[RMDB]
Source: RMDB library OK1LIB, as collected in RNAgym. Chemical mapping of a 177-nucleotide RNA with 2A3 and DMS. The RNA was probed in 150 mM KOAc, 10 mM MgCl2 and 150 mM bicine (pH 8.5) at 24 C. For 2A3 the reverse transcriptase was SuperScript II with manganese.

RNA sequence: GGGAACGACUCGAGUAGAGUCGAAAAGAGUAAGGCGGCCACAGCAGAAACGUUCAUGUCGCAGCCGCUGUCAUAUUCUGGUGAAUCUGCGAAUUCUGCUGAAGAGCACGGAAUAGGACCGUGCAAAAGCACGGGUAUAUUUCGAUAUACCCGUGCUAAAAGAAACAACAACAACAAC
Reactivity to 2A3 in 0.01 (KOAc 150mM, MgCl2 10mM, bicine 150mM(pH8.5), 24C), signal-to-noise 9, nucleotides 027 to 126: g090a010g080u160a110a050g070g010c010g020g020c030c000a080c000a020g010c000a000g040a010a070a020c130g120u180u160c160a070u230g060u110c020g000c020a000g030c030c000g020c010u010g000u010c010a030u050a140u300u130c080u110g040g000u070g030a060a080u050c020u040g010c010g010a050a090u050u010c010u010g000c000u010g020a050a010g040a020g060c000a000c000g010g030a080a080u130a180g070g050a040c000c000g000u000g000c000a050a050a020
Reactivity to DMS in 0.01 (KOAc 150mM, MgCl2 10mM, bicine 150mM(pH8.5), 24C), signal-to-noise 9, nucleotides 027 to 126: g000a090g010u010a090a090g010g000c030g000g010c120c260a130c050a040g020c010a010g000a020a060a180c170g020u020u010c140a090u030g000u000c020g000c030a060g010c110c030g010c020u000g000u040c160a090u030a080u040u020c070u020g020g020u020g000a080a090u010c030u010g000c010g000a060a140u020u000c000u010g010c000u010g010a150a080g000a160g000c000a010c000g010g000a090a130u030a130g010g010a100c000c000g010u000g000c010a020a050a090